[RMDB]
RNA sequence: GGGAACGACUCGAGUAGAGUCGAAAAGGGAGGGCAUUAUGCCAAUAAUUGCUUUGAGAUAUAUGAAAGCUGCUUUUAGCCUUCUAAAUUAAAAGGUGGAUAGAACAGGUCUUGUUUGCAAAAUAAAACACUCAAAGGACUUCGGUCCUUUGAGUGUAAAAGAAACAACAACAACAAC
Reactivity to DMS in 0.01 (KOAc 150mM, MgCl2 10mM, bicine 150mM(pH8.5), 24C), signal-to-noise 1, nucleotides 027 to 126: g030g040g020a090g000g000g040c010a040u010u000a040u070g000c040c070a020a150u060a190a060u120u020g010c000u000u020u000g000a100g020a130u060a080u000a030u010g000a080a020a070g030c000u000g080c040u000u040u010u010a050g040c030c010u010u020c010u030a100a040a050u000u000a030a050a140a040g000g000u000g050g010a030u000a050g010a200a040c130a090g000g000u010c070u000u000g020u020u020u060g000c090a020a090a040a030u000a080a080a110
Reactivity to 2A3 in 0.01 (KOAc 150mM, MgCl2 10mM, bicine 150mM(pH8.5), 24C), signal-to-noise 1, nucleotides 027 to 126: g100g000g000a080g000g000g010c040a080u060u130a040u230g020c000c050a000a070u110a090a000u270u200g000c030u030u100u020g040a160g070a000u110a010u020a030u260g200a060a000a060g000c020u020g060c070u030u030u130u180a000g000c050c000u000u000c000u050a240a250a300u270u300a080a020a000a000g080g000u040g000g170a150u130a140g030a000a000c040a040g180g000u010c130u110u010g130u050u000u110g000c000a040a040a040a040u150a060a000a000

Structure probing data (DMS and 2A3) for a 177-nucleotide construct. The DMS profile rests on 1,327 reads. For DMS the reverse transcriptase was MarathonRT. The 2A3 profile rests on 335 reads. In probing experiments dimethyl sulfate is read out at A N1 and C N3, which are open when not base-paired.